The record gives the reactivity of an RNA of 207 nucleotides to 2A3 and DMS. Reactivities are given for positions 27 through 156. Conditions: 150 mM KOAc, 10 mM MgCl2 and 150 mM bicine (pH 8.5), 24 C. It was measured as part of the RMDB library OK3TST. For DMS the reverse transcriptase was MarathonRT.

RNA sequence: GGGAACGACUCGAGUAGAGUCGAAAAAGAUUAUGAGGAUGCUGUUUUUUACUUUGUGGAUGAUGAUAAAAUAUGUAGUCGUGACUCCAUCAUCGAUCUAAUAGAUGAAUAUAUUACGUGGAGAAAUCAUGUUAUAGUGUUUAACAAAGAUAUUACCUGUCAGAUUAUGUUUCGACAUAAUCUGACAAAAAGAAACAACAACAACAAC
Reactivity to 2A3 in 0.01 (KOAc 150mM, MgCl2 10mM, bicine 150mM(pH8.5), 24C), signal-to-noise 2, nucleotides 027 to 156: a020g100a060u110u060a040u080g010a010g010g020a010u010g010c010u000g060u030u000u000u020u020u060a050c050u040u040u070g030u040g050g000a010u020g000a010u010g050a030u100a130a050a070a010u200a150u190g100u110a070g050u040c020g000u020g010a020c010u000c030c000a010u010c010a020u000c020g060a050u020c020u220a100a030u080a260g020a010u020g010a080a040u150a000u020a050u220u080a040c050g000u020g010g010a060g000a020a060a030u050c000a000u050g020u070u020a040u030a080g010u030g050u020u060u060a010a000c000a010a130a010g000a030u010a070u030u040a040c000c000
Reactivity to DMS in 0.01 (KOAc 150mM, MgCl2 10mM, bicine 150mM(pH8.5), 24C), signal-to-noise 2, nucleotides 027 to 156: a120g000a110u000u000a040u000g000a080g020g030a090u000g040c020u000g000u000u000u000u000u000u000a060c080u000u000u000g050u010g000g010a090u000g020a030u010g020a120u010a020a020a090a090u010a060u000g030u000a060g000u000c010g030u000g000a150c010u000c020c000a150u020c000a030u000c010g020a150u000c080u020a070a110u000a110g000a080u010g010a070a110u010a120u000a090u000u000a100c080g020u000g000g010a140g000a060a060a100u000c050a050u010g020u000u000a050u000a090g030u010g010u010u000u000a080a090c070a020a100a110g000a140u000a060u000u010a080c100c080